[RMDB]
RNA sequence: GGGAACGACUCGAGUAGAGUCGAAAAACGCGUGGGCCACUUGACGCUAUAACUCCCUUCGUAGCUAGCGUUCUACCGUUACCGAAGUCUAGAGGAACAUCUUCCAUGGCAUCUGUAUGGAUACCUCACCACUGGAUACUUUCGAGUAUCCAGUGGUAAAAGAAACAACAACAACAAC
Reactivity to 2A3 in 0.01 (KOAc 150mM, MgCl2 10mM, bicine 150mM(pH8.5), 24C), signal-to-noise 9, nucleotides 027 to 126: a000c040g010c010g020u050g020g020g030c040c000a050c020u040u080g040a030c020g000c020u030a040u040a170a060c040u070c020c010c000u040u070c060g030u040a040g020c040u010a020g000c010g040u050u050c030u080a110c040c010g060u050u040a050c010c030g050a050a010g050u050c050u110a040g020a030g040g030a080a060c020a110u030c050u080u010c010c010a040u040g070g000c030a100u060c090u130g100u110a060u070g020g010a010u040a090c000c000u030c010
Reactivity to DMS in 0.01 (KOAc 150mM, MgCl2 10mM, bicine 150mM(pH8.5), 24C), signal-to-noise 4, nucleotides 027 to 126: a070c100g010c030g030u010g000g020g010c000c020a050c060u010u010g000a050c060g010c030u020a060u030a110a090c170u000c020c030c020u020u020c060g010u010a030g000c060u010a070g010c070g000u020u000c050u000a070c040c010g000u000u030a060c050c010g000a090a080g010u030c060u040a090g000a030g020g010a120a100c120a090u030c100u000u000c000c020a030u000g010g020c080a060u030c090u000g010u000a050u000g000g010a030u020a050c020c020u020c070